Annotation: The record gives the reactivity of an RNA of 207 nucleotides to DMS and 2A3. DMS adducts were read by reverse transcription with MarathonRT. DMS (dimethyl sulfate) methylates the pairing face of unpaired adenines and cytosines. Reactivities are given for positions 27 through 156. For DMS, 2,744 sequencing reads were counted.
RNA sequence: GGGAACGACUCGAGUAGAGUCGAAAACAGCCGCACACGGAUCAGCUAAGGCAAUGGGCAUCCCUGCUGGCAGCUGAGUCGCAAAUCCCUAUUGAUGAACUGGGAUUCCCCUCAGAUAACCCGGCCUCCGAUUCAGCGAUUCAAUCUCAGCGAGACCUCUAAAACUUGGAUUCGUCCAAGUUUUAGAAAAAGAAACAACAACAACAAC
Reactivity to DMS in 0.01 (KOAc 150mM, MgCl2 10mM, bicine 150mM(pH8.5), 24C), signal-to-noise 2, nucleotides 027 to 156: c020a130g040c060c020g000c080a100c130a130c040g010g000a080u000c020a090g030c000u000a070a130g000g000c060a020a080u000g010g000g050c170a130u000c050c000c010u000g020c060u000g030g000c190a050g000c120u000g010a040g010u000c020g000c070a060a100a110u000c020c020c000u020a230u000u000g020a120u010g000a070a080c020u000g020g010g020a170u000u000c020c010c000c040u000c040a120g020a160u010a000a090c040c060c020g030g040c000c010u050c050c020g000a080u000u010c020a050g000c060g000a130u000u000c020a090a080u000c010u000c010a160g030c030g040a150g020a100c120c050
Reactivity to 2A3 in 0.01 (KOAc 150mM, MgCl2 10mM, bicine 150mM(pH8.5), 24C), signal-to-noise 3, nucleotides 027 to 156: c030a010g040c010c020g020c020a050c010a000c070g050g000a070u040c020a020g030c020u120a090a100g040g000c040a060a140u230g060g010g000c080a080u150c030c020c010u020g010c040u040g030g040c010a020g020c060u010g000a000g030u040c010g000c080a020a060a060u020c020c000c000u050a130u050u160g120a160u090g000a110a070c100u070g000g020g010a010u040u030c030c020c010c000u010c020a070g030a090u070a070a070c050c000c000g070g000c000c020u010c020c010g010a010u050u060c020a020g010c010g050a020u100u000c030a040a060u060c070u000c040a020g020c020g070a060g030a060c020c010